[RMDB]
RNA sequence: GGGAACGACUCGAGUAGAGUCGAAAAGAUAUGGAACGGAUGGAGAGCAACAGCACUGAUCGGAAACGAUCAGUGACAUGCUCGCAUCCCGUUCCUAAGUCAAAACGUGCGUUGUUCGCAACGCACGCCUUAGCGCAGCCUUCGGGCUGCGCUAAGGAAAAGAAACAACAACAACAAC
Reactivity to DMS in 0.01 (KOAc 150mM, MgCl2 10mM, bicine 150mM(pH8.5), 24C), signal-to-noise 1, nucleotides 027 to 126: g000a010u000a300u000g030g020a000a010c010g020g030a000u000g000g030a270g030a020g000c020a030a200c300a200g000c000a000c010u030g000a000u010c000g000g020a150a160a150c030g020a040u000c030a000g000u000g000a040c180a100u000g000c000u000c000g000c000a000u020c060c000c070g000u000u000c000c000u010a010a100g000u000c050a040a040a070a300c020g000u000g000c020g050u000u000g010u000u000c220g000c000a010a000c010g000c000a030c000g000
Reactivity to 2A3 in 0.01 (KOAc 150mM, MgCl2 10mM, bicine 150mM(pH8.5), 24C), signal-to-noise 1, nucleotides 027 to 126: g040a010u100a070u160g000g020a000a000c020g030g000a000u010g010g080a300g000a000g300c020a030a150c140a190g010c020a000c020u010g010a010u000c020g040g000a080a080a030c000g010a030u000c010a000g010u000g000a010c000a020u060g000c020u040c000g040c010a000u040c080c010c000g010u000u000c010c000u000a100a000g090u010c020a000a000a070a140c050g000u000g030c020g000u000u030g060u040u050c250g090c180a010a000c000g000c000a000c000g010
Structure probing data (DMS and 2A3) for a 177-nucleotide construct. DMS adducts were read by reverse transcription with MarathonRT. It was measured as part of the RMDB library TTRDES.